Notes
Structure probing data (2A3 and DMS) for a 177-nucleotide construct. The reactions ran in a buffer of 150 mM KOAc, 10 mM MgCl2 and 150 mM bicine (pH 8.5), at 24 C. 2A3 adducts were read by reverse transcription with SuperScript II with manganese. DMS adducts were read by reverse transcription with MarathonRT. The data come from the RNA Mapping Database (RMDB), libraries RFM100 and RFMREP. Values are in units of 0.01, from 0 to 300, in steps of 10.
RNA sequence: GGGAACGACUCGAGUAGAGUCGAAAAAGAAACCGUGUGGUAAAAGUGCGGUCCUGUUUGGUAUGUAGUACAUCGGGGGCCGUAACCUCGUUACAGUAAUAACGACAGUGCUACGCUACACAGCGCCAUGAGUACAAUCCUUCGGGAUUGUACUCAUAAAAGAAACAACAACAACAAC
Reactivity to 2A3 in 0.01 (KOAc 150mM, MgCl2 10mM, bicine 150mM(pH8.5), 24C), signal-to-noise 4, nucleotides 027 to 126: a000g100a040a040a000c040c020g010u020g020u030g030g060u060a040a080a030a060g070u050g010c000g000g060u050c000c010u200g080u060u150u170g070g000u120a050u070g090u020a130g080u050a040c010a040u030c070g010g000g070g000g000c000c000g000u000a010a020c000c010u010c010g020u030u030a020c050a080g100u250a060a130u040a100a000c020g050a000c020a010g000u030g080c000u000a040c030g010c030u020a040c030a000c000a020g040c030g020c070c010
Reactivity to DMS in 0.01 (KOAc 150mM, MgCl2 10mM, bicine 150mM(pH8.5), 24C), signal-to-noise 3, nucleotides 027 to 126: a020g000a130a100a100c030c060g040u000g020u000g010g000u030a060a070a120a170g000u000g000c000g010g010u000c040c000u010g020u030u040u000g020g010u010a090u030g000u000a020g020u000a230c030a060u000c030g000g000g000g000g000c020c030g010u010a020a000c120c160u010c000g000u000u000a040c220a110g010u010a100a120u010a010a040c000g000a050c230a090g040u000g010c000u010a020c040g050c010u000a020c040a030c070a000g010c180g000c050c040